An RNA of 177 nucleotides, treated with DMS and 2A3 and read out base by base. Reactivities are rounded to 0.1 and cut off at 0 and 3. The RNA was probed in 150 mM KOAc, 10 mM MgCl2 and 150 mM bicine (pH 8.5) at 24 C. The DMS profile rests on 1,960 reads. For DMS the reverse transcriptase was MarathonRT.
RNA sequence: GGGAACGACUCGAGUAGAGUCGAAAACUUGCCGCCCCGGGCCCGGGUCCCUGUGCUGGAUACCUCGGCAUCUUUUUCUAAAGAUGUGUGAACAAGGGGAGUAGUGGGUACACAACCCUGGCAAACGUGUACACCAUAUGUUCGCAUAUGGUGUACAAAAAGAAACAACAACAACAAC
Reactivity to DMS in 0.01 (KOAc 150mM, MgCl2 10mM, bicine 150mM(pH8.5), 24C), signal-to-noise 2, nucleotides 027 to 126: c120u000u000g010c020c020g000c030c030c010c040g020g020g020c040c040c070g030g000g000u000c040c040c060u020g010u010g000c100u000g000g010a160u000a080c020c010u000c060g000g000c000a000u000c000u000u000u010u030u020c190u040a020a020a010g010a010u000g020u010g020u010g020a080a110c160a110a150g000g010g010g000a140g000u010a090g030u010g000g030g020u000a080c100a040c160a090a120c030c010c000u000g020g020c060a090a070a090c230g010
Reactivity to 2A3 in 0.01 (KOAc 150mM, MgCl2 10mM, bicine 150mM(pH8.5), 24C), signal-to-noise 1, nucleotides 027 to 126: c010u000u050g040c000c030g060c000c010c000c000g000g090g040c020c040c030g020g030g000u020c000c000c040u100g060u060g040c080u120g030g040a020u130a190c040c010u020c020g020g020c000a000u000c000u130u010u000u090u070c130u300a000a010a000g010a000u010g030u010g110u160g120a120a060c030a110a160g000g030g010g010a010g000u010a010g000u060g100g020g040u100a000c080a020c010a030a080c020c000c000u020g030g000c000a100a060a010c120g120